An RNA of 177 nucleotides, treated with DMS and 2A3 and read out base by base. The DMS profile rests on 51,844 reads. It was measured as part of the RMDB library OK2TST. For 2A3, 35,772 sequencing reads were counted. For 2A3 the reverse transcriptase was SuperScript II with manganese.
RNA sequence: GGGAACGACUCGAGUAGAGUCGAAAAACGUCCACAGCGCAAUCGUUCAAUUUAUCGCGUAACCAGGAAAGAGAGAUAUCACGGGUGACGUGAACAGCCUCGCGUGAUGCAAGUAGCGUCGGAUUUAAAAAUGCAUAUGAUUCGUCAUAUGCAUUUUAAAAGAAACAACAACAACAAC
Reactivity to DMS in 0.01 (KOAc 150mM, MgCl2 10mM, bicine 150mM(pH8.5), 24C), signal-to-noise 9, nucleotides 027 to 126: a090c160g010u000c010c020a080c110a130g010c040g010c050a090a070u010c080g010u010u000c090a080a080u010u010u010a070u010c070g020c040g010u000a070a090c100c080a090g010g000a060a070a080g010a080g000a100g010a100u010a070u000c030a050c040g010g000g020u000g000a080c030g010u000g010a040a090c160a100g010c050c020u000c040g010c050g010u000g000a040u000g010c090a050a090g010u000a110g010c040g010u000c060g010g000a120u000u000u010a010
Reactivity to 2A3 in 0.01 (KOAc 150mM, MgCl2 10mM, bicine 150mM(pH8.5), 24C), signal-to-noise 9, nucleotides 027 to 126: a000c020g030u000c010c010a040c030a050g010c030g020c040a030a080u080c050g080u120u050c050a090a110u060u160u190a120u090c020g000c010g040u030a040a060c040c010a040g050g140a050a140a010g110a010g010a000g020a030u060a020u180c030a010c030g020g020g070u140g080a040c010g020u020g010a040a040c020a030g040c000c010u020c030g040c010g030u050g010a010u040g020c030a050a050g050u040a020g060c010g020u020c040g010g020a030u050u100u220a030

Notes: The RNA was probed in 150 mM KOAc, 10 mM MgCl2 and 150 mM bicine (pH 8.5) at 24 C.